[RMDB]
RNA sequence: GGGAACGACUCGAGUAGAGUCGAAAAGAUAUGGAGCCUGGUCUAUCAAAGGCUUCGGAAACGAACCUUGACCACGGACGGCUCCUAAGUCAAAAGGUCAUGUGUCUCUUCGGAGACACAUGACCAAGUACGGUUACAAGUUCGCUUGUAACCGUACAAAAGAAACAACAACAACAAC
Reactivity to DMS in 0.01 (KOAc 150mM, MgCl2 10mM, bicine 150mM(pH8.5), 24C), signal-to-noise 3, nucleotides 027 to 126: g020a020u000a300u000g000g000a010g040c010c020u010g010g060u000c000u000a150u000c120a100a030a030g030g010c300u000u000c010g000g000a080a120a100c010g010a040a050c010c000u000u010g000a100c300c190a060c220g000g000a050c110g010g000c020u000c000c000u000a000a080g000u020c030a060a060a110a120g000g020u000c000a000u010g010u000g010u000c000u000c000u000u010c150g010g010a040g000a010c010a000c000a000u000g000a000c000c000a000a010
Reactivity to 2A3 in 0.01 (KOAc 150mM, MgCl2 10mM, bicine 150mM(pH8.5), 24C), signal-to-noise 3, nucleotides 027 to 126: g010a000u070a010u130g000g010a000g030c040c080u240g210g150u000c040u050a300u250c120a120a100a070g000g040c140u010u010c010g010g010a030a030a020c010g010a000a010c000c000u000u050g100a070c080c100a050c220g110g040a010c030g010g040c000u000c000c000u000a070a010g040u000c040a000a030a130a110g000g000u010c000a010u000g000u000g010u000c010u000c000u070u160c300g080g000a010g020a000c000a000c000a000u000g000a000c000c000a010a000
An RNA of 177 nucleotides, treated with DMS and 2A3 and read out base by base. The DMS profile rests on 2,397 reads. The 2A3 profile rests on 4,388 reads. The reactions ran in a buffer of 150 mM KOAc, 10 mM MgCl2 and 150 mM bicine (pH 8.5), at 24 C. Reactivities are given for positions 27 through 126. For DMS the reverse transcriptase was MarathonRT. DMS (dimethyl sulfate) methylates the pairing face of unpaired adenines and cytosines.